Source information: Chemical mapping of a 177-nucleotide RNA with DMS and 2A3. For DMS, 2,620 sequencing reads were counted. The RNA was probed in 150 mM KOAc, 10 mM MgCl2 and 150 mM bicine (pH 8.5) at 24 C. For 2A3 the reverse transcriptase was SuperScript II with manganese. It was measured as part of the RMDB library TTRDES.

RNA sequence: GGGAACGACUCGAGUAGAGUCGAAAAGAUAUGGAAUGAUCUUGCUACGAAGAACGUUAUUCGGAAACGAAUAACGGGAGUAGUCAAGAGUCAUUCCUAAGUCAAAAGGCACGGUUCGCCGUGCCAACAAGGAAAACGAGUUCGCUCGUUUUCCUUGAAAAGAAACAACAACAACAAC
Reactivity to DMS in 0.01 (KOAc 150mM, MgCl2 10mM, bicine 150mM(pH8.5), 24C), signal-to-noise 3, nucleotides 027 to 126: g000a050u000a300u000g020g020a030a000u000g010a100u000c000u010u000g000c000u000a000c010g000a170a170g040a200a170c020g000u000u000a000u000u000c000g010g010a080a090a280c010g000a050a000u000a000a000c000g000g010g000a080g000u000a000g000u000c010a020a020g000a030g000u010c000a000u010u000c000c020u020a020a070g000u000c030a070a070a160a110g000g000c000a010c000g000g020u000u010c300g040c010c000g030u010g000c000c010a020a050
Reactivity to 2A3 in 0.01 (KOAc 150mM, MgCl2 10mM, bicine 150mM(pH8.5), 24C), signal-to-noise 2, nucleotides 027 to 126: g010a010u050a050u230g020g000a000a020u000g020a030u000c010u020u020g010c000u010a010c030g300a300a130g060a130a010c000g010u000u000a010u000u000c000g020g000a090a100a030c000g000a010a000u000a000a000c010g010g000g010a010g020u020a010g140u180c020a000a000g010a000g060u030c010a000u020u000c000c000u010a100a000g040u010c070a010a030a130a220g010g020c000a000c000g020g060u050u070c210g050c170c000g000u020g010c010c000a000a000